[RMDB]
RNA sequence: GGGAACGACUCGAGUAGAGUCGAAAAUCUGAAGGGAAGGAGCCUUUAGUACGAGAGGAACGGGGGUUCGUGACCUCUAGUUUAUCGGUUGUCCGACAGGGCAGUUGCCGAGUAGCCACGUCAUACGGAGAUAGCAAAAGUUCGCUUUUGCUAUCUCAAAAGAAACAACAACAACAAC
Reactivity to 2A3 in 0.01 (KOAc 150mM, MgCl2 10mM, bicine 150mM(pH8.5), 24C), signal-to-noise 1, nucleotides 027 to 126: u000c000u000g040a090a010g080g010g030a020a080g060g020a030g080c010c000u060u000u000a070g030u030a000c020g010a010g010a020g050g030a030a040c060g040g010g020g010g000u110u110c040g050u100g080a100c000c010u020c000u010a040g010u010u060u050a090u020c000g020g010u120u030g010u010c010c020g050a100c100a140g000g000g000c020a010g030u200u140g050c010c000g010a010g010u020a000g040c000c010a040c040g030u020c020a000u060a140c050g110
Reactivity to DMS in 0.01 (KOAc 150mM, MgCl2 10mM, bicine 150mM(pH8.5), 24C), signal-to-noise 4, nucleotides 027 to 126: u010c040u010g000a080a050g000g000g010a150a090g000g020a070g010c020c020u010u000u000a090g020u000a090c040g010a210g000a110g000g000a150a090c110g000g010g010g010g010u000u000c070g010u000g000a120c010c000u000c010u000a060g000u000u000u010a120u000c020g010g000u000u010g010u010c010c010g010a110c300a120g010g000g000c010a060g020u020u010g010c020c010g000a060g000u000a070g010c000c020a040c090g010u000c060a030u000a140c240g020
The record gives the reactivity of an RNA of 177 nucleotides to 2A3 and DMS.
2A3 adducts were read by reverse transcription with SuperScript II with manganese.
The reactions ran in a buffer of 150 mM KOAc, 10 mM MgCl2 and 150 mM bicine (pH 8.5), at 24 C.
For DMS the reverse transcriptase was MarathonRT.